[RMDB]
RNA sequence: GGGAACGACUCGAGUAGAGUCGAAAAGCUGAUUGAUCCAUUUUACAGAGCACUGACUGGUGUGUUUACAGUCCUUUAGCUAGACAAAGAGUGCUGAUUGGUAUGAUUUUACAGAGUGCUGAUUGUUGUGUUUACAAUCCUUUAGCUAGACACAGAACUGGAGCGUAAUAUUCGUAUUACGCUCCAGAAAAGAAACAACAACAACAAC
Reactivity to DMS in 0.01 (KOAc 150mM, MgCl2 10mM, bicine 150mM(pH8.5), 24C), signal-to-noise 2, nucleotides 027 to 156: g030c050u000g000a100u000u000g010a080u010c020c030a140u000u010u010u000a180c100a150g000a060g000c010a040c000u010g020a060c050u020g000g050u040g020u000g040u010u000u000a080c060a070g000u010c000c050u000u000u000a160g030c060u000a100g000a170c050a060a050a140g000a070g000u000g010c030u000g000a080u010u000g020g030u000a030u010g010a150u000u000u010u000a160c100a110g010a160g010u000g030c030u010g040a070u010u000g000u000u000g060u000g000u000u000u000a050c040a040a100u000c050c040u000u000u000a100g010c040u010a100g020a120c050a050c050a170g000a110a180
Reactivity to 2A3 in 0.01 (KOAc 150mM, MgCl2 10mM, bicine 150mM(pH8.5), 24C), signal-to-noise 1, nucleotides 027 to 156: g010c010u050g030a130u050u050g040a060u030c000c030a050u150u020u000u030a120c110a010g150a010g050c010a000c020u030g030a030c010u050g100g020u020g030u010g010u210u000u000a010c010a060g020u070c000c010u000u110u030a090g000c040u100a070g000a190c030a030a140a040g040a040g050u010g010c030u010g060a060u100u090g000g020u030a010u030g050a070u010u080u000u050a080c030a000g010a000g070u020g090c030u010g010a290u000u030g020u010u070g030u000g100u010u030u000a050c060a070a050u020c010c010u110u160u050a010g020c040u010a040g030a040c040a000c090a040g080a110a050